An RNA of 177 nucleotides, treated with 2A3 and DMS and read out base by base. DMS adducts were read by reverse transcription with MarathonRT. For DMS, 3,139 sequencing reads were counted. The reactions ran in a buffer of 150 mM KOAc, 10 mM MgCl2 and 150 mM bicine (pH 8.5), at 24 C. For 2A3 the reverse transcriptase was SuperScript II with manganese.
RNA sequence: GGGAACGACUCGAGUAGAGUCGAAAAGACCGUUAGUUCGCUAACGGUCAAAUAAAAUCAGCGGUAACGAGGCGUAUAAUAUUACCGCUGAACGCCUCGUUAAAAACAGGAGCUUCGGCUCCUGUAAGAAGUGUACAGGAUUCGUCCUGUACACUUCAAAAGAAACAACAACAACAAC
Reactivity to 2A3 in 0.01 (KOAc 150mM, MgCl2 10mM, bicine 150mM(pH8.5), 24C), signal-to-noise 4, nucleotides 027 to 126: g010a010c000c000g010u000u000a010g000u030u040c210g010c190u000a000a000c000g000g000u000c010a000a000a000u030a000a020a000a070u060c030a010g060c020g100g060u050a020a010c020g020a020g050g000c030g020u060a070u050a280a120u090a100u130u110a060c000c030g000c040u010g010a010a000c010g000c000c000u000c010g010u010u050a050a100a010a010a000c000a000g000g000a000g000c000u040u080c140g070g000c010u000c010c010u000g000u000a000a000
Reactivity to DMS in 0.01 (KOAc 150mM, MgCl2 10mM, bicine 150mM(pH8.5), 24C), signal-to-noise 3, nucleotides 027 to 126: g000a000c000c000g000u010u000a000g010u010u020c180g010c000u000a000a000c000g010g010u000c000a010a040a050u000a070a080a110a070u000c090a030g020c080g000g020u000a020a010c040g020a040g010g030c030g010u000a120u010a040a130u010a100u000u000a090c030c040g010c040u000g000a030a020c030g010c020c000u000c050g010u010u020a030a070a060a120a030c010a010g000g000a010g010c000u000u010c200g010g000c000u000c000c000u010g000u000a010a080